[RMDB]
RNA sequence: GGGAACGACUCGAGUAGAGUCGAAAAGAUAUGGACCGACAUGAGGUCAUAACGUAUAUUCGGAAACGAAUAUAUAUCAACCUAUGUUCGGUCCUAAGUCAAAGGAAUAACCUUCGGGUUAUUCCAACACCUGUUGUGAGUUCGCUCACAACAGGUGAAAAGAAACAACAACAACAAC
Reactivity to 2A3 in 0.01 (KOAc 150mM, MgCl2 10mM, bicine 150mM(pH8.5), 24C), signal-to-noise 2, nucleotides 027 to 126: g010a020u050a050u110g000g030a010c010c030g030a000c010a040u170g300a060g070g020u230c190a070u140a050a000c080g000u000a000u000a010u030u010c000g000g030a020a010a010c000g000a020a000u010a000u010a020u040a010u100c070a180a300c000c010u040a030u010g090u140u190c020g030g040u040c020c020u000a020a000g020u020c030a100a000a240g030g000a000a010u020a020a000c030c000u060u180c300g070g010g010u010u020a010u030u000c010c000a010a000
Reactivity to DMS in 0.01 (KOAc 150mM, MgCl2 10mM, bicine 150mM(pH8.5), 24C), signal-to-noise 1, nucleotides 027 to 126: g000a020u000a120u030g000g000a010c000c000g000a010c030a060u000g010a020g030g000u000c250a160u010a080a060c180g000u000a000u000a010u000u000c010g010g030a100a060a100c000g030a010a010u010a010u000a000u000a040u010c140a090a080c030c030u000a030u010g000u030u010c000g020g000u020c070c000u000a000a140g010u010c040a060a190a170g000g010a020a010u000a020a000c000c000u000u020c180g010g020g010u000u000a010u000u000c010c000a050a180
Source information:
This 177-nucleotide RNA was probed chemically with 2A3 and DMS. The RNA was probed in 150 mM KOAc, 10 mM MgCl2 and 150 mM bicine (pH 8.5) at 24 C. The DMS profile rests on 1,016 reads. It was measured as part of the RMDB library TTRDES.